[RMDB]
RNA sequence: GGGAACGACUCGAGUAGAGUCGAAAACGCAGAGGUGCUGCUGAAGCGAUGGAAGCAAUUGCUCAUGGUGACCAGAUGCACUCGAAUGUUAUAGGGAGGACAGUAGAAGAAAUCGAUCUGCCAGGAGUCGCGUACUACUUUUCGAAGUAGUACGCGAAAAAGAAACAACAACAACAAC
Reactivity to DMS in 0.01 (KOAc 150mM, MgCl2 10mM, bicine 150mM(pH8.5), 24C), signal-to-noise 2, nucleotides 027 to 126: c170g040c080a110g030a180g000g030u000g000c040u000g010c070u000g000a150a150g000c020g030a080u010g000g000a120a070g020c060a190a110u000u020g020c050u000c010a090u010g000g020u000g000a110c110c050a090g010a100u000g000c090a110c010u010c070g000a070a070u020g010u000u000a070u020a140g010g020g020a080g000g020a040c120a040g010u000a120g010a120a090g000a020a050a080u010c020g030a060u010c010u030g020c060c050a080g010g000a060g020
Reactivity to 2A3 in 0.01 (KOAc 150mM, MgCl2 10mM, bicine 150mM(pH8.5), 24C), signal-to-noise 2, nucleotides 027 to 126: c070g010c020a020g060a060g090g070u080g000c010u040g000c020u030g010a040a020g020c010g060a030u050g020g050a030a030g020c020a060a220u170u210g010c030u040c050a060u060g110g000u050g000a060c000c100a030g010a040u040g050c020a030c010u020c020g070a070a110u070g060u100u060a130u070a110g060g060g010a020g050g010a020c000a010g010u100a040g080a080a000g040a020a110a040u060c030g040a020u000c010u060g020c010c000a030g050g040a000g040